This 207-nucleotide RNA was probed chemically with 2A3 and DMS. The RNA was probed in 150 mM KOAc, 10 mM MgCl2 and 150 mM bicine (pH 8.5) at 24 C. Reactivities are given for positions 27 through 156.

[RMDB]
RNA sequence: GGGAACGACUCGAGUAGAGUCGAAAAGGUGAUUGUAAUACUCGCUACUGUCAAUCAUCGAUUGACAGUAUUAGACGGCUACAAUCACAUCACGUGAGUCGAUUAUUUAGCCGUCUAAUCGGUAACAUAUCGCGAGAUAUGUUACACUCACGUAUCGCGAACGUUGAUAGUUCGCUAUCAACGUUCGAAAAGAAACAACAACAACAAC
Reactivity to 2A3 in 0.01 (KOAc 150mM, MgCl2 10mM, bicine 150mM(pH8.5), 24C), signal-to-noise 6, nucleotides 027 to 156: g100g000u010g010a030u020u030g030u070a090a090u100a290c090u070c130g070c060u020a000c000u000g000u000c000a000a000u000c080a090u160c270g010a000u000u000g000a000c000a000g010u000a010u000u040a000g000a000c000g000g010c020u040a020c020a010a010u020c010a000c000a070u060c040a000c010g010u020g000a010g050u100c040g020a010u000u010a020u040u110u060a020g000c010c000g010u000c000u000a000a000u010c030g060g000u000a010a000c000a000u010a000u000c010g020c040g030a040g000a050u010a010u000g000u000u000a000c000a010c000u010c000a000c010g040u060a120u140c090g010
Reactivity to DMS in 0.01 (KOAc 150mM, MgCl2 10mM, bicine 150mM(pH8.5), 24C), signal-to-noise 2, nucleotides 027 to 156: g030g020u000g030a050u000u040g020u020a060a100u000a090c080u000c060g030c100u000a030c010u000g010u020c010a020a000u010c020a170u000c250g010a030u010u020g010a040c000a020g010u010a010u000u000a050g010a110c000g040g000c080u000a010c000a040a040u000c000a040c030a120u010c150a060c050g010u000g040a040g000u000c050g010a100u000u010a110u000u000u000a100g000c040c030g030u010c030u000a010a020u010c030g010g000u000a020a000c000a030u000a000u000c010g000c270g010a260g010a030u000a010u000g010u000u000a030c030a090c010u010c010a020c030g000u010a170u010c090g010